[RMDB]
RNA sequence: GGGAACGACUCGAGUAGAGUCGAAAAUCGUCUUUCGAGACGAGGAUUUCCUAAGUCCAGCGGGUCGAAAGGUACUACCCACCGAGUUCGGAAACGAACUCGAGGUACCUUUCUGGCGCCUAGCGCUGGAUAUGGAUUGCAGGCGAUUCGUCGCCAAUGAAAUGAGCUUAUUCGUAAGCUCAUUUCAAAAAGAAACAACAACAACAAC
Reactivity to 2A3 in 0.01 (KOAc 150mM, MgCl2 10mM, bicine 150mM(pH8.5), 24C), signal-to-noise 3, nucleotides 027 to 156: u010c010g000u000c020u080u100u100c300g120a030g000a020c010g000a020g010g010a020u090u090u000c000c010u040a180a000g030u000c010c010a000g000c000g030g020g020u020c000g010a000a000a000g010g000u010a020c020u030a030c010c060c080a020c020c010g000a000g000u000u000c000g060g030a120a090a090c030g010a000a000c000u000c000g000a000g000g000u000a000c000c000u000u000u010c030u130g010g030c090g050c070c030u060a060g060c000g000c030u000g000g010a000u010a010u010g040g010a060u030u280g140c210a100g040g000c010g020a010u040u160c250g070u020c000g050c000c030a010a080
Reactivity to DMS in 0.01 (KOAc 150mM, MgCl2 10mM, bicine 150mM(pH8.5), 24C), signal-to-noise 2, nucleotides 027 to 156: u000c000g000u000c020u000u000u000c280g010a070g010a020c010g020a020g010g010a240u000u000u000c000c000u000a150a220g080u000c040c000a010g040c010g010g010g030u000c030g000a020a020a030g000g030u000a010c020u000a020c030c000c000a300c180c000g000a000g040u000u010c020g000g000a230a170a200c030g000a000a010c000u000c000g040a030g040g000u000a000c000c000u000u000u000c040u000g020g030c000g010c090c060u010a110g030c030g020c000u020g010g020a050u000a100u010g000g000a180u000u030g000c000a220g010g030c000g050a090u000u010c230g070u000c000g000c000c000a010a300

Chemical mapping of a 207-nucleotide RNA with 2A3 and DMS. The RNA was probed in 150 mM KOAc, 10 mM MgCl2 and 150 mM bicine (pH 8.5) at 24 C. For DMS, 4,056 sequencing reads were counted. DMS adducts were read by reverse transcription with MarathonRT. It was measured as part of the RMDB library RNAMAK. 2A3 is a SHAPE reagent: it acylates the 2'-hydroxyl of flexible nucleotides of all four kinds.